[RMDB]
RNA sequence: GGGAACGACUCGAGUAGAGUCGAAAAGAUCUGCGCCGAUCCGAAACGCUAGCAAACACCCCGCAUCAUGUCGUCUCCUAACUUCGACGUGGUGAAAUACUGAGCUUAUGCGAGUAAGCCUGUUAGCAAUAGAUCAGAACGUUCGCGUUCUGAUCAAGAUUACAGUGAUCUUCGGAUCACUGUAAUCAAAAGAAACAACAACAACAAC
Reactivity to DMS in 0.01 (KOAc 150mM, MgCl2 10mM, bicine 150mM(pH8.5), 24C), signal-to-noise 2, nucleotides 027 to 156: g010a050u010c020u000g020c080g030c030c060g000a060u000c050c040g050a190a060a070c140g010c020u000a060g030c060a040a060a090c050a140c030c010c020c040g010c040a040u000c020a040u000g010u010c010g010u000c100u000c090c060u010a120a080c090u000u010c010g010a030c000g060u000g000g040u000g000a030a050a030u000a090c080u000g010a100g010c010u000u000a020u010g020c240g000a240g000u000a040a070g020c020c030u000g010u000u010a080g040c050a080a130u020a130g010a010u000c000a020g000a040a010c010g030u000u000c300g030c050g050u000u000c000u000g000a000u000c020a020a130
Reactivity to 2A3 in 0.01 (KOAc 150mM, MgCl2 10mM, bicine 150mM(pH8.5), 24C), signal-to-noise 6, nucleotides 027 to 156: g030a060u020c030u080g040c040g000c030c000g020a060u050c020c020g040a040a050a020c060g000c040u050a010g010c060a060a050a050c040a110c010c010c010c010g020c020a010u010c000a000u010g010u010c000g020u010c040u090c090c090u140a160a180c060u070u030c020g000a000c000g010u000g000g000u020g010a050a020a000u180a040c060u040g030a030g030c000u020u030a000u090g090c040g020a050g070u010a000a000g000c000c010u060g010u090u040a030g000c020a100a140u060a200g000a000u010c000a000g000a000a000c000g010u060u060c150g010c000g130u000u000c030u000g010a000u000c000a000a000